[RMDB]
Chemical mapping of a 177-nucleotide RNA with DMS and 2A3.
The RNA was probed in 150 mM KOAc, 10 mM MgCl2 and 150 mM bicine (pH 8.5) at 24 C.
2A3 adducts were read by reverse transcription with SuperScript II with manganese.
For 2A3, 2,780 sequencing reads were counted.
DMS adducts were read by reverse transcription with MarathonRT.
The DMS profile rests on 3,139 reads.

RNA sequence: GGGAACGACUCGAGUAGAGUCGAAAAGGCCUGACGUUCGCGUCAGGCCAAACCUGGAGGAGGAUGGAACACUGGCGGGAGCCGAUACCCAGGACAGGGCAGAAACUGUCCCGUUCGCGGGACAGAAGAAGAAGGUACAGUUCGCUGUACCUUCUUCAAAAGAAACAACAACAACAAC
Reactivity to DMS in 0.01 (KOAc 150mM, MgCl2 10mM, bicine 150mM(pH8.5), 24C), signal-to-noise 2, nucleotides 027 to 126: g000g020c000c000u010g030a030c010g030u000u010c200g020c010g020u000c010a000g000g030c000c000a010a030a020c040c010u000g010g000a090g000g000a060g010g010a060u000g000g020a110a060c090a040c090u000g000g000c050g010g020g000a130g010c030c000g000a110u020a070c060c020c030a110g000g000a070c070a060g020g000g030c090a070g000a100a090a120c010u000g000u000c000c000c010g000u000u000c140g030c020g020g000g010a010c010a010g000a050a080
Reactivity to 2A3 in 0.01 (KOAc 150mM, MgCl2 10mM, bicine 150mM(pH8.5), 24C), signal-to-noise 2, nucleotides 027 to 126: g010g000c010c000u010g000a000c000g050u050u070c300g040c020g090u020c010a000g000g020c010c000a010a000a000c000c000u010g010g040a060g020g020a010g000g010a040u050g040g040a080a030c050a020c150u060g050g000c040g000g050g020a030g010c000c010g030a070u090a070c020c000c020a000g040g000a070c050a030g050g000g010c030a020g110a050a100a050c000u000g000u010c030c000c000g020u040u060c260g000c010g030g000g000a000c010a000g000a000a030